The record gives the reactivity of an RNA of 177 nucleotides to 2A3 and DMS. 2A3 adducts were read by reverse transcription with SuperScript II with manganese. Source: RMDB library OK2TST, as collected in RNAgym. DMS (dimethyl sulfate) methylates the pairing face of unpaired adenines and cytosines. For DMS the reverse transcriptase was MarathonRT.

[RMDB]
RNA sequence: GGGAACGACUCGAGUAGAGUCGAAAAAGCGAUGCAGCCUCCAAAGGAGAUGACUUUGCACUUUCUGAACAGGUCAUAAAUCAUCUUGGGAGAAGUGACAGAGCAGGCUCCUAAGUCAAUGAAGGAGCAUCUGAGCGUACUUCGGUACGCUCAGAUGAAAAGAAACAACAACAACAAC
Reactivity to 2A3 in 0.01 (KOAc 150mM, MgCl2 10mM, bicine 150mM(pH8.5), 24C), signal-to-noise 1, nucleotides 027 to 126: a000g060c020g020a020u150g000c000a010g030c000c010u000c020c000a140a170a030g060g000a000g000a010u040g070a110c000u010u020u010g010c010a010c000u090u260u060c030u100g050a190a020c010a040g030g020u040c030a040u170a180a090a110u130c050a000u010c010u040u020g030g000g030a010g030a000a010g020u000g010a280c010a000g020a000g000c000a010g250g000c000u020c010c000u010a040a030g070u030c050a000a050u060g110a090a030g000g000a000g060
Reactivity to DMS in 0.01 (KOAc 150mM, MgCl2 10mM, bicine 150mM(pH8.5), 24C), signal-to-noise 2, nucleotides 027 to 126: a150g000c070g000a120u000g020c000a140g010c020c010u000c000c010a010a130a110g000g000a080g000a050u000g010a090c000u000u000u000g020c040a020c010u000u000u000c040u020g000a180a240c110a010g010g000u000c140a100u010a050a080a110u020c200a040u010c020u000u000g000g000g020a150g000a050a000g000u000g000a170c000a020g000a060g000c030a040g030g010c000u000c000c010u020a010a250g000u000c110a090a050u040g000a130a050g030g010a170g010